[RMDB]
RNA sequence: GGGAACGACUCGAGUAGAGUCGAAAAGAAAGAAAGAAAGGAAUCUGACAGAAUGACGGAUUCGAUCGUUGUGGUCGGCGGGCCACCACGUCAUUCCUUCGCACUGUCUCCGGGCAGACCGCCAUAAAAAAGCGGAUCUACUUCGGUAGAUCCGCAACCAUAGCCUGGACUUCGGUCCAGGCUAUGGAAAAGAAACAACAACAACAAC
Reactivity to 2A3 in 0.01 (KOAc 150mM, MgCl2 10mM, bicine 150mM(pH8.5), 24C), signal-to-noise 1, nucleotides 027 to 156: g060a000a020a010g060a050a070a000g090a040a030a010g050g010a030a040u050c040u110g020a050c050a070g190a150a240u150g020a040c040g040g000a020u010u010c080g020a040u180c010g010u000u000g000u000g010g000u030c070g000g040c000g000g000g000c000c000a010c000c000a000c000g000u040c010a060u010u020c010c000u060u070c080g010c040a050c030u000g040u000c010u040c010c030g050g010g000c000a000g010a110c030c030g040c000c000a080u240a030a110a000a000a020a000g000c000g010g000a000u020c000u010a000c020u010u100c280g060g000u000a000g000a010u000c000c000g000c000a000a000

The data come from the RNA Mapping Database (RMDB), library M2RFPK. Chemical mapping of a 207-nucleotide RNA with 2A3. High 2A3 reactivity points to a flexible backbone, as in loops and unpaired stretches. For 2A3 the reverse transcriptase was SuperScript II with manganese.